[RMDB]
RNA sequence: GGGAACGACUCGAGUAGAGUCGAAAAGAUAUGGACGUCCCAAGUCGCAUACGAAAUUCGGAAACGAACACGUAUGAACUACGACGACGGACGUCCUAAGUCAAAGGUACGACUUCGGUCGUACCAACCAUCGUUCUUUGUUCGCAAAGAACGAUGGAAAAGAAACAACAACAACAAC
Reactivity to 2A3 in 0.01 (KOAc 150mM, MgCl2 10mM, bicine 150mM(pH8.5), 24C), signal-to-noise 3, nucleotides 027 to 126: g020a010u080a060u150g000g010a000c000g000u000c010c000c000a020a010g000u000c000g010c040a000u010a010c010g070a110a160a220u060u010c000g050g020a030a100a080c010g020a000a010c040a010c130g020u020a000u030g010a050a040c100u230a070c170g020a000c010g000a010c030g000g000a000c000g010u000c000c000u000a010a010g030u000c040a060a050a080g000g000u020a000c000g000a000c010u060u150c300g090g020u000c000g000u000a010c000c000a010a000
Reactivity to DMS in 0.01 (KOAc 150mM, MgCl2 10mM, bicine 150mM(pH8.5), 24C), signal-to-noise 2, nucleotides 027 to 126: g010a050u000a300u000g000g000a010c000g030u010c000c000c020a090a300g000u000c000g000c000a000u000a000c040g020a070a080a300u010u010c000g010g020a050a100a140c000g010a000a040c300a300c040g000u000a000u000g000a090a080c120u010a270c050g000a030c000g000a300c300g010g000a040c000g030u040c000c000u000a010a100g000u000c030a080a060a100g000g020u010a000c000g000a010c020u000u060c230g000g000u010c000g000u000a010c000c000a020a110
An RNA of 177 nucleotides, treated with 2A3 and DMS and read out base by base. Values are in units of 0.01, from 0 to 300, in steps of 10. The reactions ran in a buffer of 150 mM KOAc, 10 mM MgCl2 and 150 mM bicine (pH 8.5), at 24 C. 2A3 adducts were read by reverse transcription with SuperScript II with manganese. For DMS the reverse transcriptase was MarathonRT.